The record gives the reactivity of an RNA of 177 nucleotides to DMS and 2A3. Reactivities are given for positions 27 through 126. The RNA was probed in 150 mM KOAc, 10 mM MgCl2 and 150 mM bicine (pH 8.5) at 24 C. For DMS, 2,042 sequencing reads were counted. For DMS the reverse transcriptase was MarathonRT. 2A3 adducts were read by reverse transcription with SuperScript II with manganese.
[RMDB]
RNA sequence: GGGAACGACUCGAGUAGAGUCGAAAACUAUACAGACCCGCGAGCCGUACGUGGUUCGCGGGGGGUGCGUGGGGUCCGUGGCUCCCGGGUAGGCCGGGGCUCCCUGGGAGACCGGGGCUGUCGUGGACGCAUAGCCCUUAUUCGUAAGGGCUAUGCGAAAAGAAACAACAACAACAAC
Reactivity to DMS in 0.01 (KOAc 150mM, MgCl2 10mM, bicine 150mM(pH8.5), 24C), signal-to-noise 1, nucleotides 027 to 126: c130u000a040u030a190c200a090g010a080c010c000c000g040c060g000a030g030c000c000g000u050a180c300g070u040g000g000u000u000c000g060c000g000g000g000g000g000g000u010g010c110g000u000g000g000g000g000u000c050c080g020u040g000g060c000u000c000c000c020g000g000g000u000a100g020g000c050c010g000g030g000g000c130u000c060c000c020u000g000g000g000a040g020a100c020c030g000g000g000g010c090u000g030u070c070g000u000g000g000a210
Reactivity to 2A3 in 0.01 (KOAc 150mM, MgCl2 10mM, bicine 150mM(pH8.5), 24C), signal-to-noise 2, nucleotides 027 to 126: c030u020a010u090a300c070a050g210a120c000c000c010g010c000g000a000g000c000c000g130u300a270c090g160u300g020g000u030u000c000g000c000g000g000g000g000g060g000u110g000c020g000u080g000g140g000g010u050c000c000g030u110g040g040c000u030c030c010c000g000g000g000u070a050g060g000c020c030g000g000g040g000c070u130c000c000c020u050g000g020g000a000g000a080c010c010g000g000g000g000c020u050g060u100c010g050u080g050g020a000